[RMDB]
RNA sequence: GGGAACGACUCGAGUAGAGUCGAAAAGUAAGUCCGAUGUCACAACGUCGGCCCGCUGCCAGUGCGUAGACGCGCCCGGCGUCGAUCACUUUAUCGCACGCGGCGAAAUGCUUUUUAGUGCCGACGCGGGCGGGAAUAUCCAGCGCGGUGACAUCGACCUAUCGGACUGAUUCGUCAGUCCGAUAGGAAAAGAAACAACAACAACAAC
Reactivity to 2A3 in 0.01 (KOAc 150mM, MgCl2 10mM, bicine 150mM(pH8.5), 24C), signal-to-noise 1, nucleotides 027 to 156: g160u210a000a010g070u160c110c000g000a000u000g000u000c000a000c020a040a050c000g000u000c010g000g000c040c000c000g000c020u030g000c080c050a170g020u000g010c030g030u050a050g020a010c020g020c000g000c010c080c000g110g030c020g000u000c010g020a040u140c030a090c000u100u110u130a090u160c050g020c000a010c000g000c060g060g020c010g020a070a000a050u140g050c040u100u150u030u110u300a110g000u150g000c010c020g000a000c000g000c050g010g040g000c040g030g000g000a090a120u190a120u190c010c000a030g000c070g000c000g080g000u020g000a020c030a000u010c010g000a020
This 207-nucleotide RNA was probed chemically with 2A3. Values cover nucleotides 27 to 156. Source: RMDB library OK3TST, as collected in RNAgym. The RNA was probed in 150 mM KOAc, 10 mM MgCl2 and 150 mM bicine (pH 8.5) at 24 C. For 2A3, 641 sequencing reads were counted.